Annotation:
This 207-nucleotide RNA was probed chemically with 2A3. The reactions ran in a buffer of 150 mM KOAc, 10 mM MgCl2 and 150 mM bicine (pH 8.5), at 24 C. For 2A3, 926 sequencing reads were counted.

RNA sequence: GGGAACGACUCGAGUAGAGUCGAAAAGUGACUAUUAACAAUUUAACAGAUGUCAACACUAAAGUAGGGAAAAGUUAAGUAAAUUGCCCGAAGUCAUCCAUCUAAAUAAAGCUAUGGUUCCAAUCCGCAGUCCAUGUUCUCAAACCUUCUGUUAUGAGAUCCCUAGUACUUUCGAGUACUAGGGAUCAAAAGAAACAACAACAACAAC
Reactivity to 2A3 in 0.01 (KOAc 150mM, MgCl2 10mM, bicine 150mM(pH8.5), 24C), signal-to-noise 3, nucleotides 027 to 156: g050u050g030a000c020u030a050u300u060a200a040c090a070a090u130u160u220a100a080c060a050g060a110u140g040u110c070a070a070c020a060c090u170a220a040a030g050u060a040g080g020g000a030a060a060a170g070u090u090a110a050g040u070a060a100a230u130u130g060c000c000c000g020a020a010g010u020c000a010u050c000c060a040u010c030u140a070a120a150u170a060a210a010g000c020u030a040u140g040g030u070u090c000c000a010a060u040c050c020g060c050a000g030u000c010c030a050u080g040u090u030c070u040c040a120a130a120c050c000u070u080c020u080g060u110u040a040u130g070a040